[RMDB]
RNA sequence: GGGAACGACUCGAGUAGAGUCGAAAAGAUUCCUCGUUGUUGAGCGAGGUUUAAACAAAUCGACCACACAAACGUAGAUCCGACUACGGAUUUAUAAAUUAAGGCAUUAAGUGUGAUAAGGAGACAAAAAACGAUGUUGUGUUCGCACAACAUCGAACUUGUUCGAUUCGUUCGCGAAUCGAACAAGAAAAGAAACAACAACAACAAC
Reactivity to 2A3 in 0.01 (KOAc 150mM, MgCl2 10mM, bicine 150mM(pH8.5), 24C), signal-to-noise 2, nucleotides 027 to 156: g090a090u160u150c000c010u000c000g000u000u040g020u000u000g000a000g010c000g000a000g050g000u040u090u020a000a010a000c030a020a000a020u000c020g000a030c000c000a030c000a010c010a030a050a020c040g000u010a010g000a020u000c020c010g020a030c140u220a070c120g010g000a000u000u120u000a070u050a070a070a010u240u090a110a080g050g000c050a020u110u100a150a090g000u020g020u010g010a000u010a000a050g110g020a020g020a050c140a010a160a010a080a010a010c010g000a000u000g000u000u000g020u010g010u070u070c210g060c050a000c000a010a010c000a010u000c000g010a000a000

An RNA of 207 nucleotides, treated with 2A3 and read out base by base. Reactivities are rounded to 0.1 and cut off at 0 and 3. It was measured as part of the RMDB library M2RFPK. The reactions ran in a buffer of 150 mM KOAc, 10 mM MgCl2 and 150 mM bicine (pH 8.5), at 24 C. High 2A3 reactivity points to a flexible backbone, as in loops and unpaired stretches. Values cover nucleotides 27 to 156.